This 177-nucleotide RNA was probed chemically with 2A3 and DMS. The reactions ran in a buffer of 150 mM KOAc, 10 mM MgCl2 and 150 mM bicine (pH 8.5), at 24 C. For 2A3 the reverse transcriptase was SuperScript II with manganese.
RNA sequence: GGGAACGACUCGAGUAGAGUCGAAAACGGUAACACCCGAAGCCGGUGGCCCAACCCCUUGUGGGAGGGAGCUGUCGAAGGUGGGACUGGCGAUUGGGACGAAGUCGUAACAAGGUAGCCGUACCGGCAUAAGAAAGCGGUUCGCCGCUUUCUUAUGAAAAGAAACAACAACAACAAC
Reactivity to 2A3 in 0.01 (KOAc 150mM, MgCl2 10mM, bicine 150mM(pH8.5), 24C), signal-to-noise 3, nucleotides 027 to 126: c000g010g010u020a070a010c000a000c020c000c040g040a020a010g050c060c000g080g020u080g130g240c000c010c000a140a260c020c000c020c040u110u300g050u300g050g020g000a020g020g000g020a040g020c020u020g010u040c030g020a050a010g060g010u060g020g030g030a060c050u060g010g000c010g030a070u020u090g050g040g020a010c050g030a140a030g150u190c020g020u050a010a020c000a040a030g090g040u070a020g060c000c000g000u000a020c000c000g080g000
Reactivity to DMS in 0.01 (KOAc 150mM, MgCl2 10mM, bicine 150mM(pH8.5), 24C), signal-to-noise 7, nucleotides 027 to 126: c030g010g000u010a050a120c060a040c020c000c030g010a220a230g020c110c020g010g010u000g020g020c010c000c010a080a180c020c010c000c090u010u020g030u010g020g010g010a300g020g010g000a300g010c020u000g010u000c010g000a130a080g000g020u000g000g000g000a050c050u000g010g020c010g010a120u010u000g000g020g010a070c020g010a120a070g000u010c020g000u010a040a070c060a040a060g000g000u000a150g020c030c020g010u010a060c020c010g010g000